[RMDB]
RNA sequence: GGGAACGACUCGAGUAGAGUCGAAAACUUAGUGAGUUCGCUCACUAAGGGACUCUGGAACCCAGGCUGGAGAGGGACCUAGUAGGAGGCUGGGCACCACCAACAUUCAGCGCUUCGGCGCUGAAAACGCCAGAUAUCGAUUCGUCGAUAUCUGGCGAAAAGAAACAACAACAACAAC
Reactivity to 2A3 in 0.01 (KOAc 150mM, MgCl2 10mM, bicine 150mM(pH8.5), 24C), signal-to-noise 1, nucleotides 027 to 126: c000u000u000a000g000u010g020a020g000u030u120c160g070c190u000c000a000c010u000a000a010g000g060g020a010c050u020c090u050g060g030a070a060c020c010c000a020g090g070c060u040g040g020a090g010a050g080g040g010a020c010c030u030a050g050u030a090g040g190a100g010g070c020u010g000g000g030c020a040c000c000a010c000c010a020a120c010a060u020u060c020a010g000c000g010c000u060u080c240g110g020c000g000c000u020g000a000a010a010a010